[RMDB]
An RNA of 177 nucleotides, treated with 2A3 and read out base by base. 2A3 adducts were read by reverse transcription with SuperScript II with manganese. The reactions ran in a buffer of 150 mM KOAc, 10 mM MgCl2 and 150 mM bicine (pH 8.5), at 24 C. For 2A3, 700 sequencing reads were counted.
RNA sequence: GGGAACGACUCGAGUAGAGUCGAAAAUUUUGCUCUUCACUGUAUCUUCAGGGUCUAGUAGAUCACAUGAUUCAUCAGAGGACUUGAAAUACAUGCCGUGCGUUCCCGGUAUUCGUACCGGGAACGCGGUCUGAAAUAGCUUCGGCUAUUUCAGACCAAAAGAAACAACAACAACAAC
Reactivity to 2A3 in 0.01 (KOAc 150mM, MgCl2 10mM, bicine 150mM(pH8.5), 24C), signal-to-noise 1, nucleotides 027 to 126: u030u060u020u080g040c010u040c010u170u050c080a060c090u040g000u020a020u010c080u050u030c120a030g100g010g110u010c050u060a070g060u040a030g100a030u010c050a080c060a230u220g040a030u070u050c030a140u030c100a100g020a030g180g030a030c040u020u050g020a000a000a000u050a010c030a040u080g040c030c080g260u100g010c000g010u010u010c000c000c000g000g000u030a030u010u060c130g000u000a000c000c000g000g000g020a000a000c010g010c020